The data come from the RNA Mapping Database (RMDB), library M2RFPK.
Chemical mapping of a 207-nucleotide RNA with 2A3 and DMS.
The reactions ran in a buffer of 150 mM KOAc, 10 mM MgCl2 and 150 mM bicine (pH 8.5), at 24 C.
Reactivities are given for positions 27 through 156.
The DMS profile rests on 1,622 reads.
DMS adducts were read by reverse transcription with MarathonRT.
For 2A3 the reverse transcriptase was SuperScript II with manganese.
The 2A3 profile rests on 1,193 reads.
RNA sequence: GGGAACGACUCGAGUAGAGUCGAAAAUGAGAUAGCUAAAUCACCUCGGUAUGAUUAGGGUGAGACCUAGGAACCGUAGGGGCAUUCUCAAAGGAAGCUUUUGCAGUGACGCCCAUGUAAGUGGGAUAAGAACCAACCCACUUCGGUGGGUUGGUAACCCCUGUAUUUAGUUCGCUAAAUACAGGGGAAAAGAAACAACAACAACAAC
Reactivity to 2A3 in 0.01 (KOAc 150mM, MgCl2 10mM, bicine 150mM(pH8.5), 24C), signal-to-noise 2, nucleotides 027 to 156: u080g010a000g000a010u120a080g000c050u080a070a160a140u130c040a070c010c000u020c030g000g010u100a170u150g070a130u150u040a020g000g000g050u080g070a080g020a050c000c000u000a020g050g050a030a050c020c000g050u200a050g000g000g010g000c000a020u070u020c020u010c050a040a060a010g080g030a060a090g000c020u010u060u180u230g050c150a080g020u010g040a020c060g040c010c000c010a000u060g090u170a130a150g020u010g020g000g020a030u060a100a080g050a020a010c000c000a000a000c020c000c000a000c050u000u000c050g030g010u000g000g000g000u010u030g000g000u000a000a000
Reactivity to DMS in 0.01 (KOAc 150mM, MgCl2 10mM, bicine 150mM(pH8.5), 24C), signal-to-noise 1, nucleotides 027 to 156: u020g000a070g010a050u000a180g050c060u020a080a120a110u020c050a050c010c000u000c060g030g020u020a030u020g020a260u000u010a020g050g020g000u000g010a230g010a110c000c010u000a070g020g000a080a080c010c010g040u000a060g030g020g030g000c060a210u000u000c030u000c010a150a080a110g000g030a070a120g040c040u000u000u030u000g020c070a050g000u020g000a100c000g000c030c000c010a020u000g010u000a110a190g010u000g000g080g020a050u010a030a070g040a130a130c000c020a050a080c030c000c000a010c000u000u010c220g070g000u000g020g040g070u000u000g010g010u010a000a040